The record gives the reactivity of an RNA of 177 nucleotides to 2A3 and DMS. For DMS, 2,952 sequencing reads were counted. Reactivities are given for positions 27 through 126.
RNA sequence: GGGAACGACUCGAGUAGAGUCGAAAAUAAAAUCGUAGGGCGACACGAUCGACGUAAAUCGCUCAAACUACUCGAGACCAAAGGAAUACGCUUCGGUAACUCGCUCUAAUCCCGAGCGAUAAAUGAAUCAUACAUAAUCCUUCGGGAUUAUGUAUGAAAAAGAAACAACAACAACAAC
Reactivity to 2A3 in 0.01 (KOAc 150mM, MgCl2 10mM, bicine 150mM(pH8.5), 24C), signal-to-noise 3, nucleotides 027 to 126: u090a010a030a000a030u020c020g010u040a140g000g010g020c010g000a010c000a010c130g050a090u120c040g100a100c030g000u020a030a050a110u090c030g010c030u040c070a020a020a010c010u000a000c000u000c000g010a000g030a050c010c040a110a040a000g120g040a140a050u110a140c040g000c070u060u090c010g030g000u010a040a030c020u000c030g010c020u000c010u030a020a050u010c000c010c000g000a010g000c010g030a060u100a040a090a040u160g100a030a050
Reactivity to DMS in 0.01 (KOAc 150mM, MgCl2 10mM, bicine 150mM(pH8.5), 24C), signal-to-noise 4, nucleotides 027 to 126: u000a130a090a130a120u010c040g010u000a130g030g000g000c020g020a080c300a020c030g010a140u000c020g010a060c020g020u000a020a040a100u000c120g020c070u010c090a080a080a150c040u000a020c020u000c000g000a030g020a100c070c040a030a100a060g020g000a120a090u000a050c070g000c040u010u010c050g020g010u010a060a170c100u000c020g000c030u000c000u010a060a180u000c090c000c030g000a030g000c000g010a050u000a020a050a080u000g010a110a090
About this RNA
Conditions: 150 mM KOAc, 10 mM MgCl2 and 150 mM bicine (pH 8.5), 24 C.